The data come from the RNA Mapping Database (RMDB), libraries RFM100 and RFMREP. This 177-nucleotide RNA was probed chemically with 2A3 and DMS. Conditions: 150 mM KOAc, 10 mM MgCl2 and 150 mM bicine (pH 8.5), 24 C. In probing experiments dimethyl sulfate is read out at A N1 and C N3, which are open when not base-paired. 2A3 adducts were read by reverse transcription with SuperScript II with manganese.
[RMDB]
RNA sequence: GGGAACGACUCGAGUAGAGUCGAAAAGUAGCCCAGUCGUUAGGUAUGUAACCUUUCCUUGUGAGAACGUUGGUUCGACUCCGCUUGCCGACAAUUUCAUAAGAAAAGUUGCAAAUCGAGCUGCUGAUUUAUUGUGUAGAUUCGUCUACACAAUAAAAAAAGAAACAACAACAACAAC
Reactivity to 2A3 in 0.01 (KOAc 150mM, MgCl2 10mM, bicine 150mM(pH8.5), 24C), signal-to-noise 9, nucleotides 027 to 126: g090u100a070g090c000c000c000a000g030u040c030g010u020u030a020g000g000u020a010u040g020u010a010a020c020c000u010u010u000c040c030u020u020g000u000g010a010g000a040a020c070g020u010u020g020g020u100u110c040g120a160c080u090c070c050g060c080u050u090g000c000c000g000a000c010a010a020u020u010u010c010a010u010a020a010g000a010a020a000a000g000u010u000g000c000a010a030a040u020c020g010a010g010c010u020g000c000u010g060a120
Reactivity to DMS in 0.01 (KOAc 150mM, MgCl2 10mM, bicine 150mM(pH8.5), 24C), signal-to-noise 9, nucleotides 027 to 126: g010u010a120g010c010c010c010a050g010u010c300g010u000u000a070g010g020u000a030u000g010u000a010a010c070c040u000u000u000c060c040u000u000g030u000g000a020g000a010a030c300g000u000u000g010g010u000u010c080g010a110c060u020c160c140g010c100u000u010g010c000c000g000a010c020a040a300u000u000u000c000a010u010a020a030g000a020a010a020a030g000u000u000g000c010a000a070a030u000c010g000a060g010c010u000g010c000u000g010a290